[RMDB]
The data come from the RNA Mapping Database (RMDB), library TTRDEL. Structure probing data (DMS) for a 177-nucleotide construct. The reactions ran in a buffer of 150 mM KOAc, 10 mM MgCl2 and 150 mM bicine (pH 8.5), at 24 C. For DMS, 1,736 sequencing reads were counted.
RNA sequence: GGGAACGACUCGAGUAGAGUCGAAAAGAUAUGGACUGGUGGAGCUGUCGGUCGGAAACGACCGUCCAGCGAUGAAACCAGGUCCUAAGUCAAAAGACCAGUGUGGGCUUCGGCCCACACUGGUCAACAUUCUACACAACUUCGGUUGUGUAGAAUGAAAAGAAACAACAACAACAAC
Reactivity to DMS in 0.01 (KOAc 150mM, MgCl2 10mM, bicine 150mM(pH8.5), 24C), signal-to-noise 1, nucleotides 027 to 126: g000a020u000a120u000g010g010a150c000u000g020g000u000g000g000a030g000c000u000g020u000c000g000g000u000c000g010g010a010a020a040c010g010a030c010c000g010u010c190c120a000g040c000g000a160u000g000a070a200a040c000c000a030g020g010u000c000c000u000a010a090g010u010c010a120a100a150a110g000a020c000c010a000g030u010g010u000g000g010g030c010u000u020c180g020g030c000c010c000a000c010a000c000u030g000g010u000c000a010a090